[RMDB]
RNA sequence: GGGAACGACUCGAGUAGAGUCGAAAAGUAGCGGCGCAUAUCGACGAUGUGAUCGACAUGUUCGAUAUCCACCGGGCACUGCUCGACGCAGGCACCACAGGUCACACAUGACCACAAGACGUCGGGACCGUUGAUCCGAAUUCGUUCGGAUCAACGGAAAAGAAACAACAACAACAAC
Reactivity to DMS in 0.01 (KOAc 150mM, MgCl2 10mM, bicine 150mM(pH8.5), 24C), signal-to-noise 2, nucleotides 027 to 126: g030u000a110g030c020g000g000c120g000c220a100u010a000u000c020g000a030c130g020a160u000g010u010g000a170u020c120g000a160c080a030u000g000u000u010c000g000a030u010a120u080c180c040a030c090c070g000g000g000c100a010c020u000g000c160u050c000g000a000c080g000c050a130g000g000c160a200c000c110a120c000a100g000g010u000c000a010c300a100c260a180u050g000a000c010c000a040c210a080a100g030a140c090g020u000c010g000g000g000a120
Reactivity to 2A3 in 0.01 (KOAc 150mM, MgCl2 10mM, bicine 150mM(pH8.5), 24C), signal-to-noise 4, nucleotides 027 to 126: g120u140a030g050c010g030g010c010g040c000a000u030a000u110c010g030a020c050g100a060u040g090u030g080a300u150c110g090a010c010a040u050g080u100u030c000g000a010u010a010u020c020c000a020c030c000g020g030g020c050a030c080u020g020c000u000c000g000a010c010g000c010a070g070g020c030a040c040c010a060c040a060g010g000u010c030a050c000a040c010a170u220g000a020c000c000a010c030a040a030g060a030c020g020u010c000g000g000g030a010
Source information
This 177-nucleotide RNA was probed chemically with DMS and 2A3. Conditions: 150 mM KOAc, 10 mM MgCl2 and 150 mM bicine (pH 8.5), 24 C. DMS adducts were read by reverse transcription with MarathonRT. For 2A3 the reverse transcriptase was SuperScript II with manganese. Source: RMDB library OK1LIB, as collected in RNAgym.